[RMDB]
RNA sequence: GGGAACGACUCGAGUAGAGUCGAAAAUGAAACGAAGGGGGGACGGAGAAGGCUAUGUUGGCCGGGCGACGGUUGUCCCGGUUUAAGCGUGUAGGCUGGUUUUCCAGGCAAAUCCGGAGAAAAAAAAGAUAAUACUCGGUUUCGACCGAGUAUUAUCAAAAGAAACAACAACAACAAC
Reactivity to DMS in 0.01 (KOAc 150mM, MgCl2 10mM, bicine 150mM(pH8.5), 24C), signal-to-noise 2, nucleotides 027 to 126: u020g000a080a140a070c070g020a080a080g030g010g000g020g000g000a070c050g030g000a050g000a090a130g000g010c030u000a030u000g010u000u000g020g000c020c010g000g000g010c300g000a080c190g020g000u000u010g010u000c010c000c010g010g000u000u000u000a040a060g030c060g020u010g010u020a060g010g000c030u000g010g000u000u000u000u000c010c030a190g000g010c040a020a030a090u000c010c020g010g010a130g010a020a000a000a050a100a060a130a170